[RMDB]
The record gives the reactivity of an RNA of 207 nucleotides to 2A3. It was measured as part of the RMDB library OK3TST.

RNA sequence: GGGAACGACUCGAGUAGAGUCGAAAACUUUUACGGGGCUGGAAUGAGCCGGAACGUGCGGCAUUCGUUGGCCGCUGGCGGACAACCGCGGCGCGCGGGCUGGAAUACCCGGUGCGGAAUGUCAACCGACGGAAUACACAACAGUUCGGGCCUACUCCACAACGUAACGUUUCGACGUUACGUUGUGAAAAGAAACAACAACAACAAC
Reactivity to 2A3 in 0.01 (KOAc 150mM, MgCl2 10mM, bicine 150mM(pH8.5), 24C), signal-to-noise 1, nucleotides 027 to 156: c000u160u050u140u190a090c090g060g000g000g060c060u090g110g000a040a090u140g010a030g030c040c000g020g030a070a010c010g070u050g090c050g000g040c040a060u050u070c050g050u110u160g050g000c000c000g020c010u120g040g000c010g040g020a090c060a150a070c030c000g000c000g000g000c010g010c030g060c000g010g010g000c040u190g040g090a000a080u070a170c010c000c000g120g000u050g000c000g000g080a030a030u110g000u020c040a000a000c000c010g010a010c000g060g060a060a000u200a070c070a010c010a040a190c050a070g050u020u040c000g030g020g010c000c000u050a060c010u130c020
Values cover nucleotides 27 to 156. For 2A3 the reverse transcriptase was SuperScript II with manganese. The RNA was probed in 150 mM KOAc, 10 mM MgCl2 and 150 mM bicine (pH 8.5) at 24 C.